[RMDB]
RNA sequence: GGGAACGACUCGAGUAGAGUCGAAAACGGCGGCCGGCAAGCCCUCGGCAAGCCGGACGGAGCGGGUAUAGGGCACGAGUAGAUCGUCGCGCGUGCCGACGACCAGCGUCGGGGUGCGGAUCUCGGAACUAGGAUAUUAGUUCGCUAAUAUCCUAGUAAAAGAAACAACAACAACAAC
Reactivity to DMS in 0.01 (KOAc 150mM, MgCl2 10mM, bicine 150mM(pH8.5), 24C), signal-to-noise 9, nucleotides 027 to 126: c080g000g010c040g000g010c000c000g020g020c020a080a300g010c020c010c120u030c250g010g030c020a060a300g010c000c010g000g000a050c040g000g010a120g000c060g000g000g010u010a080u020a090g010g000g000c060a110c070g000a060g000u040a050g000a030u000c030g000u040c020g000c010g010c020g010u030g000c010c000g000a030c020g000a200c160c230a160g010c020g010u010c020g000g000g000g020u000g000c010g000g000a040u000c010u000c020g000g020a110
Reactivity to 2A3 in 0.01 (KOAc 150mM, MgCl2 10mM, bicine 150mM(pH8.5), 24C), signal-to-noise 9, nucleotides 027 to 126: c020g060g000c020g020g000c000c010g010g010c050a080a030g030c040c050c060u120c060g030g010c030a030a020g010c000c000g000g010a010c020g010g000a070g030c060g010g030g020u110a120u170a190g030g010g000c050a020c100g030a040g050u160a030g040a070u050c030g140u100c020g060c000g000c030g080u180g160c020c000g000a010c010g030a080c020c110a090g150c010g010u010c000g000g010g010g010u030g000c010g010g010a040u010c010u010c030g030g020a040